[RMDB]
RNA sequence: GGGAACGACUCGAGUAGAGUCGAAAAGGACAGAGCCAGAGGCUGGGCAGCGAGCGGGGCCUGCUCACCGCUUGGAGAUCUCCUGGUAGCGUAGCUGCAGCUUCCCCUGCAGGUCAUGCUGUGGGAAGAGGAGAGGAGAGGUCGGCCUGCAAGGCAAGCAGUCCUAUUUAUUCGUAAAUAGGACUGCAAAAGAAACAACAACAACAAC
Reactivity to 2A3 in 0.01 (KOAc 150mM, MgCl2 10mM, bicine 150mM(pH8.5), 24C), signal-to-noise 2, nucleotides 027 to 156: g060g010a030c080a060g040a020g050c010c000a040g020a020g050g030c030u030g030g040g000c030a030g080c040g000a010g110c050g020g030g010g050c000c030u050g000c040u070c050a050c000c040g010c090u050u080g070g010a040g030a090u000c000u000c000c020u060g080g050u100a030g040c110g030u040a010g020c060u080g010c020a010g080c000u010u020c000c000c000c010u000g000c010a030g000g100u150c060a100u060g000c020u030g070u300g050g020g000a010a010g030a030g050g040a100g010a040g030g010a030g000a000g000g020u090c070g040g000c000c010u060g030c100a080a000g040g000c020a040a020